[RMDB]
RNA sequence: GGGAACGACUCGAGUAGAGUCGAAAAACUGCGGCUGCGCACGGUCGGCGCGCACACGCUCUUCUGCUUUCUGGGGCUCCUCCCUCCAGCCGAGGUCCCUCGGGGCGUCUGUGCAGUCUGGGCUUUCUGAAAUGAUUCAUUUCGAUGAAUCAUUUCAAAAAGAAACAACAACAACAAC
Reactivity to 2A3 in 0.01 (KOAc 150mM, MgCl2 10mM, bicine 150mM(pH8.5), 24C), signal-to-noise 8, nucleotides 027 to 126: a000c050u080g030c010g030g000c020u040g000c020g000c030a040c060g060g040u080c040g030g010c030g000c000g030c020a020c010a010c050g030c010u010c010u130u030c040u060g060c030u050u100u070c040u070g000g000g030g020c030u030c010c010u020c010c010c010u020c020c020a030g010c010c030g020a020g010g030u050c020c000c000u020c030g000g010g000g000c010g030u020c040u050g030u030g000c010a020g020u010c030u050g000g040g010c010u030u040u020c030
Reactivity to DMS in 0.01 (KOAc 150mM, MgCl2 10mM, bicine 150mM(pH8.5), 24C), signal-to-noise 6, nucleotides 027 to 126: a090c070u010g000c050g000g010c050u000g020c050g010c040a060c080g010g020u010c060g010g000c060g010c060g010c050a050c120a090c060g000c020u010c040u010u010c050u000g000c070u010u000u000c040u020g000g010g000g000c060u000c030c020u010c020c030c010u010c030c040a080g010c070c070g010a070g010g010u000c070c010c020u010c100g000g000g000g010c030g000u000c060u010g010u000g000c040a090g010u000c030u010g010g010g010c020u000u000u010c050